[RMDB]
RNA sequence: GGGAACGACUCGAGUAGAGUCGAAAAGAUAUGGACCACGAGGUAGCGAGGUAGAUCGGAAACGAUCUACUACCCACCGCUACUCCCCACCGUGAUGUCCUAAGUCAAAUCUCCGUUCGCGGAGAAACCUUAGAUAUCGGUUCGCCGAUAUCUAAGGAAAAGAAACAACAACAACAAC
Reactivity to DMS in 0.01 (KOAc 150mM, MgCl2 10mM, bicine 150mM(pH8.5), 24C), signal-to-noise 5, nucleotides 027 to 126: g010a080u010a190u000g000g010a020c010c030a010c020g000a140g010g000u000a010g020c010g000a070g020g000u010a000g000a010u020c010g000g000a100a080a150c000g000a010u000c000u000a010c000u000a030c040c010c070a300c080c000g000c000u000a020c000u000c010c030c010c040a300c090c020g000u000g000a170u000g010u000c000c010u010a050a130g010u000c080a040a150a220u000c000u000c000c000g010u010u010c210g030c010g000g000a000g000a010a050a090
Reactivity to 2A3 in 0.01 (KOAc 150mM, MgCl2 10mM, bicine 150mM(pH8.5), 24C), signal-to-noise 3, nucleotides 027 to 126: g080a040u170a060u260g000g010a000c000c000a000c010g020a010g030g000u010a000g010c000g000a000g030g000u000a010g010a010u000c010g010g020a070a050a020c000g000a000u010c000u010a000c000u010a020c010c010c000a030c010c000g000c000u000a010c030u080c040c010c010c020a090c020c060g020u020g040a220u230g030u000c000c000u020a090a020g090u080c090a070a050a240u000c010u000c010c000g010u080u090c300g000c040g090g010a000g000a050a030a010
Structure probing data (DMS and 2A3) for a 177-nucleotide construct. The reactions ran in a buffer of 150 mM KOAc, 10 mM MgCl2 and 150 mM bicine (pH 8.5), at 24 C. The data come from the RNA Mapping Database (RMDB), library TTRDEL.